[RMDB]
RNA sequence: GGGAACGACUCGAGUAGAGUCGAAAAGUAGAGUGUAUCAUGUCAGUAAGCAUGCCGGGGAAUGGUGGUUUACCCCGUUAUCAAAUGAUUACCGACCAAUAAUUGGCGAAACUCGUUUCCCGUUGGCAAAGUCACGGCGUGUUCGCACGCCGUGAAAUCCACGUUAAAGGUUCGCCUUUAACGUGGAAAAAGAAACAACAACAACAAC
Reactivity to DMS in 0.01 (KOAc 150mM, MgCl2 10mM, bicine 150mM(pH8.5), 24C), signal-to-noise 1, nucleotides 027 to 156: g000u000a030g020a260g000u000g020u000a080u000c000a080u000g010u000c030a090g010u000a020a020g010c000a020u000g000c180c020g000g020g030g000a070a240u000g050g000u000g000g000u020u000u000a300c020c000c000c000g030u010u000a060u010c240a090a070a040u010g000a060u000u000a010c050c010g030a040c000c070a050a090u000a030a120u020u010g010g050c040g040a170a120a020c020u000c050g010u020u000u000c000c000c010g010u000u030g010g000c080a080a100a180g000u000c000a020c010g010g030c020g010u010g000u010u000c300g100c000a010c010g020c010c000g060u020g000a040a030a070
Reactivity to 2A3 in 0.01 (KOAc 150mM, MgCl2 10mM, bicine 150mM(pH8.5), 24C), signal-to-noise 1, nucleotides 027 to 156: g050u020a000g010a030g000u060g030u060a120u180c010a030u090g050u010c050a010g050u150a130a000g000c060a010u030g030c100c030g000g000g000g040a000a070u070g050g030u040g000g070u120u050u290a190c000c000c000c010g000u000u050a070u070c030a090a060a000u020g010a000u030u050a010c000c060g070a090c030c020a030a070u210a120a140u110u070g030g000c010g020a030a010a020c060u060c000g000u000u020u100c030c000c000g010u010u030g000g010c020a120a080a000g000u010c000a000c000g000g000c000g000u000g000u000u000c040g010c100a000c000g000c000c000g000u020g000a000a000a000